[RMDB]
RNA sequence: GGGAACGACUCGAGUAGAGUCGAAAAGAAUUGGUAUGUAAGCUACUUCUUCCAGUAGCUGCAUCAUAACAUCAAGGUUAUGCAUACUGAGCCGAAGCUCAGCUUCGGUCCUCCAAGGAAGACCAAAUACAGCUCAGCCCGUUCGCGGGCUGAGCAAGUUACGACACGUGUUCGCACGUGUCGUAACAAAAGAAACAACAACAACAAC
Reactivity to 2A3 in 0.01 (KOAc 150mM, MgCl2 10mM, bicine 150mM(pH8.5), 24C), signal-to-noise 1, nucleotides 027 to 156: g120a000a070u020u030g000g000u000a010u010g000u000a010a000g010c000u000a000c010u090u080c000u010u000c000c000a010g000u000a000g000c000u000g000c000a000u010c010a000u000a010a010c030a080u290c170a100a030g300g000u010u010a000u000g020c000a000u000a000c000u000g000a000g000c000c000g020a000a000g010c020u090c300a070g000c000u050u000c020g010g000u000c000c000u170c030c000a050a050g000g000a000a000g000a020c040c100a000a040a070u260a090c060a010g070c000u010c000a010g010c000c020c000g030u040u050c160g000c040g100g000g000c000u000g000a000g000c000a020a000
Description:
Chemical mapping of a 207-nucleotide RNA with 2A3. Source: RMDB library M2RFPK, as collected in RNAgym. For 2A3, 889 sequencing reads were counted. The RNA was probed in 150 mM KOAc, 10 mM MgCl2 and 150 mM bicine (pH 8.5) at 24 C.